RNA sequence: GGGAACGACUCGAGUAGAGUCGAAAAGCCAUAACAAUUGAUAAGAUGGUUAGCCAUGGUGGGUGAUACCAAAUCAUGGUAGCGCCAUAGAGCGAUGGCUGAAAGUGAAUUAUCCACAAAAAGGCGACAUAGAGUAGCUUUUCGAAGCUACUCUAUGAAAAGAAACAACAACAACAAC
Reactivity to DMS in 0.01 (KOAc 150mM, MgCl2 10mM, bicine 150mM(pH8.5), 24C), signal-to-noise 6, nucleotides 027 to 126: g000c010c010a060u010a060a070c080a110a130u000u010g010a080u000a040a050g010a070u010g010g010u000u000a220g010c010c010a010u000g020g040u000g010g010g040u000g000a130u010a110c010c010a040a100a100u010c130a040u000g010g000u000a030g020c160g000c020c000a090u010a080g010a180g010c150g010a020u000g000g000c010u000g000a050a060a070g010u000g010a100a090u000u000a050u000c020c150a060c100a060a050a050a100a110g000g010c080g010a190
Reactivity to 2A3 in 0.01 (KOAc 150mM, MgCl2 10mM, bicine 150mM(pH8.5), 24C), signal-to-noise 3, nucleotides 027 to 126: g010c000c000a020u090a070a050c070a080a180u110u180g030a040u100a140a060g050a100u080g060g000u040u060a010g030c000c000a000u030g120g020u060g040g010g020u050g030a040u060a080c020c000a060a080a100u200c090a070u080g040g020u050a010g080c010g010c020c020a040u090a060g060a000g000c070g050a020u010g000g000c000u020g040a090a030a000g050u050g020a020a020u070u020a030u060c040c020a040c060a050a130a040a030a020g100g010c040g020a020
The record gives the reactivity of an RNA of 177 nucleotides to DMS and 2A3. Conditions: 150 mM KOAc, 10 mM MgCl2 and 150 mM bicine (pH 8.5), 24 C. The 2A3 profile rests on 5,108 reads.